[RMDB]
RNA sequence: GGGAACGACUCGAGUAGAGUCGAAAAGGACCAUACCAGCUGAGGGGGACGUUUCUAGGUGAAGUACAGGAUCUCCAGACCGAACUGAGCCAACCAGGCCCCAGGAGGUCGCAACGGCUCAUAGAACGUAGUGAUAACCAUUCGUGGUUAUCACUACAAAAGAAACAACAACAACAAC
Reactivity to 2A3 in 0.01 (KOAc 150mM, MgCl2 10mM, bicine 150mM(pH8.5), 24C), signal-to-noise 4, nucleotides 027 to 126: g040g010a010c020c020a020u080a090c020c020a020g020c040u070g040a110g000g030g000g020g010a010c020g020u010u080u030c050u060a050g030g010u050g070a070a020g020u050a050c010a050g000g060a070u020c030u020c020c020a040g030a080c010c020g010a050a030c060u030g010a000g030c000c010a010a020c060c020a060g030g010c010c020c000c000a030g070g070a110g000g010u000c030g000c030a040a050c070g010g000c010u030c020a050u090a070g110a070a030c050
Reactivity to DMS in 0.01 (KOAc 150mM, MgCl2 10mM, bicine 150mM(pH8.5), 24C), signal-to-noise 8, nucleotides 027 to 126: g010g020a120c050c040a110u010a130c060c030a100g020c040u000g010a120g010g010g010g010g010a100c100g010u000u000u000c030u000a100g020g010u000g000a070a070g000u010a050c100a080g000g000a070u000c030u010c040c040a130g010a090c050c030g000a100a150c140u000g000a090g010c020c020a080a100c220c140a170g010g000c010c010c020c090a100g000g010a150g020g020u000c030g000c120a070a110c150g000g010c020u000c020a060u010a070g010a090a130c200